[RMDB]
About this RNA
Chemical mapping of a 207-nucleotide RNA with 2A3 and DMS. Reactivities are given for positions 27 through 156. For DMS the reverse transcriptase was MarathonRT. For DMS, 2,627 sequencing reads were counted. Source: RMDB library OK3TST, as collected in RNAgym.
RNA sequence: GGGAACGACUCGAGUAGAGUCGAAAAUGGAUACCGGCCGCACGGGCAAUCUCGGAAAGCACCGCAUCUGGCUCAAAGCAGGCCGCAACAAGCCGCUCUUUGUCUUCCUGAGACCAGCGCCGCGGCGCUCGACAGACGUGAUCACCUCAAUCGGAUGGCUAAUAUGAAAAUUCGUUUUCAUAUUAGCAAAAGAAACAACAACAACAAC
Reactivity to 2A3 in 0.01 (KOAc 150mM, MgCl2 10mM, bicine 150mM(pH8.5), 24C), signal-to-noise 4, nucleotides 027 to 156: u100g040g010a040u060a150c020c020g040g000c020c040g040c020a040c040g010g000g050c030a050a080u050c030u030c060g030g000a080a030a000g000c020a020c020c000g010c000a060u040c060u050g040g000c000u020c020a090a160a000g000c020a040g010g000c020c030g010c020a030a210c030a110a070g020c010c020g040c040u060c020u080u160u140g060u060c010u050u020c010c030u040g060a080g060a260c010c030a030g010c080g060c070c070g000c040g020g000c020g000c020u030c010g060a070c060a060g040a030c030g030u040g020a030u060c030a030c030c020u100c010a060a100u160c030g110g020a050u130g110
Reactivity to DMS in 0.01 (KOAc 150mM, MgCl2 10mM, bicine 150mM(pH8.5), 24C), signal-to-noise 1, nucleotides 027 to 156: u020g010g000a140u000a100c030c030g000g030c040c050g080c070a150c080g030g030g020c060a050a070u010c020u000c050g030g000a130a080a080g050c000a040c030c000g050c050a090u000c010u000g040g000c010u000c060a090a020a060g000c040a140g060g020c010c020g010c000a130a110c140a120a020g020c020c030g000c030u010c050u000u020u000g000u000c030u020u000c040c050u000g010a110g000a020c020c010a110g010c050g020c010c080g040c010g040g000c000g030c030u000c040g000a220c050a070g010a040c030g020u000g010a160u010c060a030c000c030u000c090a040a140u020c060g000g020a120u000g030